[RMDB]
RNA sequence: GGGAACGACUCGAGUAGAGUCGAAAACUCACAAGAAUCUCGUACUACUGGUUCUCAAUAUAAAUUUGAGAUGUGGAUUCAAGCGUUAGACGGUUCUAACAGCGAAAAUACUACAAACCUAUUUGAAGUUCAUAUUAGAGUUCGCUCUAAUAUGAACAAAAGAAACAACAACAACAAC
Reactivity to 2A3 in 0.01 (KOAc 150mM, MgCl2 10mM, bicine 150mM(pH8.5), 24C), signal-to-noise 6, nucleotides 027 to 126: c000u010c000a040c030a030a060g090a090a080u050c060u030c120g070u120a080c030u040a040c040u080g040g020u080u010c000u000c010a050a010u080a020u080a220a200a150u050u040u020g020a030g030a040u060g030u050g030g010a020u020u020c030a040a020g000c010g000u010u000a010g030a060c150g120g110u200u030c000u010a010a020c020a030g010c000g040a090a010a010a030u120a150c020u010a020c030a050a090a040c010c010u070a130u100u100u170g050a150a030
Reactivity to DMS in 0.01 (KOAc 150mM, MgCl2 10mM, bicine 150mM(pH8.5), 24C), signal-to-noise 4, nucleotides 027 to 126: c030u000c030a120c220a130a150g000a100a080u010c060u000c050g010u010a120c090u010a100c160u000g010g010u000u000c000u010c030a020a030u010a300u000a070a090a070u010u000u000g000a050g020a100u020g010u000g000g000a080u000u000c020a010a300g010c010g010u000u000a000g010a050c250g030g000u010u000c000u000a010a030c000a100g040c010g000a110a060a020a030u000a100c010u010a020c040a060a080a060c050c030u000a070u010u000u000g000a120a160
An RNA of 177 nucleotides, treated with 2A3 and DMS and read out base by base. Conditions: 150 mM KOAc, 10 mM MgCl2 and 150 mM bicine (pH 8.5), 24 C. Values cover nucleotides 27 to 126. 2A3 adducts were read by reverse transcription with SuperScript II with manganese. For 2A3, 6,087 sequencing reads were counted. Values are in units of 0.01, from 0 to 300, in steps of 10. The data come from the RNA Mapping Database (RMDB), library OK2TST.